[RMDB]
RNA sequence: GGGAACGACUCGAGUAGAGUCGAAAAAUGGAGAGUUCUGAGCCAAAUUUGGAAGGAGAUCACCAAGGAGAGAACAUUACUGUGCAAGCUGUGAAGGGUGGAGUUUUUGGAUAGCUGGUUUGGGAUAGUCACUAGUAACGUUCGCGUUACUAGUGACAAAAGAAACAACAACAACAAC
Reactivity to 2A3 in 0.01 (KOAc 150mM, MgCl2 10mM, bicine 150mM(pH8.5), 24C), signal-to-noise 1, nucleotides 027 to 126: a000u130g000g000a080g000a020g040u080u030c010u070g030a030g080c000c050a060a070a080u170u100u050g020g000a040a030g000g040a070g020a050u010c030a010c060c040a030a040g090g050a050g020a000g000a060a010c010a030u050u130a050c050u020g030u050g020c010a000a000g000c050u080g040u030g130a040a050g020g000g000u000g010g010a040g000u020u040u050u090u000g040g010a070u050a050g000c030u000g060g050u080u130u040g030g010g010a040u050a020
Reactivity to DMS in 0.01 (KOAc 150mM, MgCl2 10mM, bicine 150mM(pH8.5), 24C), signal-to-noise 2, nucleotides 027 to 126: a130u000g000g000a050g010a080g020u000u010c030u000g020a140g010c030c030a050a110a180u000u000u000g020g010a090a050g010g000a040g010a040u010c050a090c060c060a030a090g000g000a070g000a080g010a070a030c090a070u000u020a060c090u010g030u000g020c070a090a070g000c060u000g000u000g000a040a060g000g010g020u000g010g010a040g000u000u010u000u030u000g010g010a040u000a060g020c050u000g000g010u000u000u010g000g000g020a090u010a110
The record gives the reactivity of an RNA of 177 nucleotides to 2A3 and DMS. The reactions ran in a buffer of 150 mM KOAc, 10 mM MgCl2 and 150 mM bicine (pH 8.5), at 24 C. Reactivities are given for positions 27 through 126.